[RMDB]
RNA sequence: GGGAACGACUCGAGUAGAGUCGAAAAGUAAAUAAACGGCACCUAUAAGGUGGUGCCGAACCAGCGUGACCUACCAACACGCAACGAGCAGUCUGGUAUGACUGCAAACCUAAGGUAAACAUAAAAAGUCGUAGAAUAGAUUCGUCUAUUCUACGACAAAAGAAACAACAACAACAAC
Reactivity to DMS in 0.01 (KOAc 150mM, MgCl2 10mM, bicine 150mM(pH8.5), 24C), signal-to-noise 3, nucleotides 027 to 126: g030u010a070a100a130u010a080a100a140c010g040g000c000a020c000c010u000a130u010a170a120g010g020u000g010g040u010g030c010c000g000a030a010c150c090a080g010c000g020u000g000a090c010c010u010a000c020c020a300a050c010a000c010g030c000a120a090c180g030a210g000c000a010g030u010c000u000g020g020u000a100u000g000a030c010u000g000c020a010a050a040c030c030u010a030a060g000g000u010a010a120a090c170a090u010a060a080a040a120a050
Reactivity to 2A3 in 0.01 (KOAc 150mM, MgCl2 10mM, bicine 150mM(pH8.5), 24C), signal-to-noise 2, nucleotides 027 to 126: g000u000a000a000a150u140a090a150a010c000g000g000c000a000c010c010u050a060u040a300a060g290g040u100g010g000u000g000c000c000g010a000a000c020c010a010g000c000g020u020g050a170c000c030u030a010c050c020a010a020c000a000c000g000c000a030a020c040g020a050g000c000a010g000u010c010u130g070g210u300a150u250g000a020c000u000g000c000a010a010a000c010c010u030a030a010g000g010u020a120a160a050c040a080u210a100a140a040a000a030